[RMDB]
RNA sequence: GGGAACGACUCGAGUAGAGUCGAAAAGCUAGGCAUUUCGAUGCCUAGCGAGCGCUGAGUCUAUGCAUCUCUGAAUCACACAACAGCCGUGUCUAUGCGUGGGAGUAUCCCUCUUCGGAGGGAUAAACGGCACUUUUAGGUUCGCCUAAAAGUGCCGAAAAGAAACAACAACAACAAC
Reactivity to 2A3 in 0.01 (KOAc 150mM, MgCl2 10mM, bicine 150mM(pH8.5), 24C), signal-to-noise 1, nucleotides 027 to 126: g000c000u000a010g000g000c000a000u010u060u160c200g100a000u050g000c000c000u000a010g000c010g010a020g020c060g000c050u090g040a050g040u010c010u070a110u100g040c000a100u010c010u030c030u140g040a090a090u070c000a000c000a010c010a090a190c000a020g030c020c040g040u020g040u060c040u070a050u080g080c020g040u010g050g000g000a050g010u010a010u000c020c010c000u030c050u030u070c200g070g000a000g000g010g010a000u010a000a000a000
Reactivity to DMS in 0.01 (KOAc 150mM, MgCl2 10mM, bicine 150mM(pH8.5), 24C), signal-to-noise 1, nucleotides 027 to 126: g000c010u000a010g000g030c000a020u000u000u020c150g020a070u000g000c000c020u000a010g000c010g000a040g020c070g000c040u000g020a100g000u000c030u000a020u000g000c060a060u000c030u010c090u000g000a110a100u000c020a070c080a080c060a090a080c120a050g010c020c060g000u000g000u010c090u000a090u010g010c000g040u000g020g000g020a120g020u000a010u000c000c000c000u000c000u000u010c160g020g000a000g000g010g050a020u000a000a090a130
Record summary
Structure probing data (2A3 and DMS) for a 177-nucleotide construct. For 2A3 the reverse transcriptase was SuperScript II with manganese.